This 177-nucleotide RNA was probed chemically with DMS.
[RMDB]
RNA sequence: GGGAACGACUCGAGUAGAGUCGAAAAGGAAUGCCUGACGGUCACUGUUGCCUUUGGGAUUUCAGGCGUGCAGGUCACGCGUAUUCUGGACAGCAUUGCGCUGUUUCGCGGCUAUCCGGCGACGAUAUGCAUGCUGUGGGUUCGCCCACAGCAUGCAAAAAGAAACAACAACAACAAC
Reactivity to DMS in 0.01 (KOAc 150mM, MgCl2 10mM, bicine 150mM(pH8.5), 24C), signal-to-noise 1, nucleotides 027 to 126: g040g000a060a060u000g020c010c030u000g000a040c120g000g000u000c070a110c140u000g010u000u000g000c000c010u000u000u020g000g000g010a040u000u020u000c050a140g020g020c050g040u000g010c070a140g030g000u000c070a100c050g020c030g000u000a110u020u000c050u000g000g000a010c000a020g010c020a200u000u010g020c210g010c200u000g020u000u000u020c030g010c080g000g000c040u000a110u000c030c000g000g000c090g020a050c070g010a100u000a110
DMS adducts were read by reverse transcription with MarathonRT.